[RMDB]
RNA sequence: GGGAACGACUCGAGUAGAGUCGAAAAGACGACUUCGGUCGUCAGAAGAGAUAUGGAAAUGAUCGUCCAGGGAGUCCCAACAGGUCGGAAACGACCUGUCGGGACUUUGAUCUGGACGAGUCAUUUCCUAAGUCGACUACAUGGGUUCGCCCAUGAACUAAGUCUUAAACUUCGGUUUAAGACUUAGAAAAGAAACAACAACAACAAC
Reactivity to 2A3 in 0.01 (KOAc 150mM, MgCl2 10mM, bicine 150mM(pH8.5), 24C), signal-to-noise 1, nucleotides 027 to 156: g010a000c010g000a000c030u100u160c300g100g000u010c000g020u010c010a010g030a080a030g060a010g020a030u060a040u130g000g000a010a000a000u010g000a020u020c000g000u000c000c000a000g020g000g010a010g000u000c000c000c000a000a010c010a000g010g000u000c000g040g000a040a090a070c020g000a000c000c000u000g000u000c000g000g030g000a000c000u020u030u030g000a000u020c010u000g010g000a000c000g010a010g000u000c000a000u000u000u000c000c000u000a040a010g040u010c010g030a090c030u220a080c030a010u020g060g000g000u050u120c240g060c040c010c000a010u010g000a020a010
Reactivity to DMS in 0.01 (KOAc 150mM, MgCl2 10mM, bicine 150mM(pH8.5), 24C), signal-to-noise 1, nucleotides 027 to 156: g000a030c000g000a000c020u000u000c280g120g010u000c020g080u000c010a000g020a140a060g020a300g010a080u010a220u000g000g010a000a020a020u000g000a060u000c010g010u000c010c020a000g000g040g010a010g020u000c000c000c000a010a000c000a040g030g030u000c010g030g010a120a110a300c020g010a040c010c000u000g010u000c010g030g000g010a010c000u000u000u000g010a060u000c020u010g000g030a050c010g010a010g000u000c000a030u010u000u010c000c000u010a000a050g010u010c020g000a170c050u010a080c020a010u000g000g010g020u000u020c230g000c000c020c000a040u000g000a100a170